[RMDB]
The record gives the reactivity of an RNA of 177 nucleotides to 2A3 and DMS.
DMS adducts were read by reverse transcription with MarathonRT.
Values are in units of 0.01, from 0 to 300, in steps of 10.
Source: RMDB library OK2TST, as collected in RNAgym.
RNA sequence: GGGAACGACUCGAGUAGAGUCGAAAAUCGAAGGACGUGGACGAUGCCACUCUGUCCCGCCUGGAACUAGAGCGCAAGAUUGAGUCUCUGAUGGAUGAGAUUGAGUUCCUCAAGAAGCUGCACGAGGCUGACACCUUCUCUUCGGAGAAGGUGUCAGAAAAGAAACAACAACAACAAC
Reactivity to 2A3 in 0.01 (KOAc 150mM, MgCl2 10mM, bicine 150mM(pH8.5), 24C), signal-to-noise 1, nucleotides 027 to 126: u050c010g010a040a030g050g010a060c030g070u190g020g010a000c020g010a070u170g090c000c030a060c100u000c070u050g000u000c000c000c000g000c010c020u030g010g020a070a050c090u040a060g000a040g040c100g010c120a090a050g020a080u030u080g010a000g020u000c020u070c040u110g110a130u180g070g130a060u130g020a020g010a020u030u030g000a040g090u080u010c040c000u050c020a050a010g040a060a000g020c090u070g020c020a040c050g040a020g060g000
Reactivity to DMS in 0.01 (KOAc 150mM, MgCl2 10mM, bicine 150mM(pH8.5), 24C), signal-to-noise 2, nucleotides 027 to 126: u000c060g040a210a080g000g000a060c040g050u010g010g020a060c020g020a070u020g020c060c070a080c110u000c050u000g000u000c010c020c040g010c030c030u000g020g000a100a090c170u010a080g000a090g010c170g030c050a080a130g010a130u000u010g000a130g010u000c010u010c010u000g010a080u000g000g010a120u000g000a110g010a060u000u000g000a170g000u010u010c070c000u000c090a050a070g000a160a080g010c030u000g000c070a050c070g000a150g000g030
For 2A3, 825 sequencing reads were counted. 2A3 is a SHAPE reagent: it acylates the 2'-hydroxyl of flexible nucleotides of all four kinds.